RNA sequence: GGGAACGACUCGAGUAGAGUCGAAAACGUUAGUCGGGUUAGACCCCCGACGGCCGAACGAGUAAGGGUUCCUCAGCAAUGCUGAUCAGCUGAGGGUUAGCCGGUCCUAAGUCUGCCCGUAAGUCGAGGUUUUAAGGGAGUUCGCUCCCUUAAAACCAAAAGAAACAACAACAACAAC
Reactivity to 2A3 in 0.01 (KOAc 150mM, MgCl2 10mM, bicine 150mM(pH8.5), 24C), signal-to-noise 2, nucleotides 027 to 126: c020g000u040u030a040g040u030c000g000g010g010u070u080a040g040a080c000c000c000c000c090g030a000c000g000g000c000c020g010a110a090c050g040a040g150u140a110a110g070g000g000u020u040c000c000u010c000a010g000c030a090a080u250g050c050u270g040a290u160c010a020g010c000u000g000a010g060g030g000u010u060a000g000c000c000g020g030u030c000c000u050a060a010g000u000c030u010g000c000c000c000g030u040a040a040g000u050c020g020a080
Reactivity to DMS in 0.01 (KOAc 150mM, MgCl2 10mM, bicine 150mM(pH8.5), 24C), signal-to-noise 2, nucleotides 027 to 126: c080g020u030u010a160g020u000c000g000g000g000u000u020a070g000a140c160c190c040c060c100g010a050c030g000g020c060c120g000a030a160c020g000a130g060u070a210a070g020g000g020u020u000c000c000u000c000a010g030c020a130a060u020g010c150u000g010a130u060c090a140g030c000u000g000a000g000g000g010u000u050a040g040c040c000g000g000u010c030c070u000a180a150g000u030c030u000g000c000c000c000g020u040a010a090g000u000c070g000a070